[RMDB]
RNA sequence: GGGAACGACUCGAGUAGAGUCGAAAACUGCAGCCGGGACGCAGUGAUCCUCGCAGGGUCGCACGGUCGCCUCGGGUCGGCCUCGUGUCGGCUCGACCUGCGAGGGGAGCGAGUGGCGAGCCCGACCAAAACUUUCUCGCCUUCGGGCGAGAAAGAAGUUUUGUAAGAAGUUCGCUUCUUACAAAACAAAAGAAACAACAACAACAAC
Reactivity to 2A3 in 0.01 (KOAc 150mM, MgCl2 10mM, bicine 150mM(pH8.5), 24C), signal-to-noise 2, nucleotides 027 to 156: c050u060g030c040a010g020c030c010g020g000g110a010c020g010c010a090g110u010g010a000u020c000c000u000c010g010c020a010g020g020g070u210c060g010c050a080c100g060g030u080c030g030c010c000u020c010g010g000g010u010c000g000g000c000c000u160c150g180u270g040u050c020g010g010c010u020c010g020a020c000c010u000g000c000g000a010g000g000g000g000a000g000c040g030a070g090u170g050g020c010g010a040g020c000c010c000g020a030c000c040a020a080a000a040c000u000u000u000c000u000c000g000c010c000u020u050c140g100g020g000c010g000a000g000a000a000a000g000a010a010